This 177-nucleotide RNA was probed chemically with DMS. The reactions ran in a buffer of 150 mM KOAc, 10 mM MgCl2 and 150 mM bicine (pH 8.5), at 24 C. Source: RMDB library OK2TRN, as collected in RNAgym.
RNA sequence: GGGAACGACUCGAGUAGAGUCGAAAAAGGCGGCAGCAGAGGAUAGCAGAGAUCACCGAGAUGAUCCAUGUGGCAAGCCUGCUGCAUGAUGACGUCAUCGACAAUGCAGAGGUGCGGCGGGGGCUGCACCAGGAGCCUCUUUCGAGAGGCUCCUGGUAAAAGAAACAACAACAACAAC
Reactivity to DMS in 0.01 (KOAc 150mM, MgCl2 10mM, bicine 150mM(pH8.5), 24C), signal-to-noise 1, nucleotides 027 to 126: a200g030g000c050g000g020c040a010g000c050a100g030a100g010g000a050u010a130g020c020a050g010a210g020a100u010c020a060c080c110g010a130g020a060u000g010a070u000c000c040a080u010g000u010g050g000c060a070a160g030c200c120u010g000c000u000g010c000a020u010g000a120u030g010a080c170g020u000c090a030u010c060g000a060c130a080a090u000g050c050a020g000a050g010g040u010g010c070g020g000c040g000g010g030g010g020c060u000g000c060